[RMDB]
RNA sequence: GGGAACGACUCGAGUAGAGUCGAAAAGAUGCUGUGCCACGUGUCUGGAGAAUUGCACAGUUACACCAAGACCGUUUUCCAGGUAACACUCAGAACUUGCCAUCUGUACGUAAUCCUCUUAGAGAAGAGACAUCGCUAUUUUCGAAUAGCGAUGUCUAAAAGAAACAACAACAACAAC
Reactivity to 2A3 in 0.01 (KOAc 150mM, MgCl2 10mM, bicine 150mM(pH8.5), 24C), signal-to-noise 2, nucleotides 027 to 126: g030a010u070g000c020u010g020u050g020c020c030a110c070g150u090g050u060c040u050g030g000a040g020a090a100u110u080g000c010a030c000a050g020u060u080a040c060a020c000c010a000a040g020a030c010c010g000u000u020u080u000c020c020a010g010g020u040a060a070c040a010c060u030c030a020g010a060a040c010u050u050g040c030c000a040u010c030u060g020u100a050c030g000u010a040a020u070c030c000u000c050u040u110a040g020a000g020a260a010g090
Reactivity to DMS in 0.01 (KOAc 150mM, MgCl2 10mM, bicine 150mM(pH8.5), 24C), signal-to-noise 3, nucleotides 027 to 126: g000a120u000g030c020u000g000u000g010c040c220a060c140g010u000g040u010c000u010g030g010a040g010a050a070u010u000g010c040a050c040a040g010u000u000a100c110a160c060c050a140a090g010a120c090c040g000u000u000u000u020c010c020a090g000g020u000a060a110c110a060c070u000c090a050g010a050a060c040u000u000g020c050c020a070u010c020u010g000u020a020c090g020u000a070a050u000c050c010u000c090u010u000a110g000a180g010a080a110g020
Structure probing data (2A3 and DMS) for a 177-nucleotide construct. The reactions ran in a buffer of 150 mM KOAc, 10 mM MgCl2 and 150 mM bicine (pH 8.5), at 24 C. The 2A3 profile rests on 2,292 reads. The data come from the RNA Mapping Database (RMDB), library OK2TST.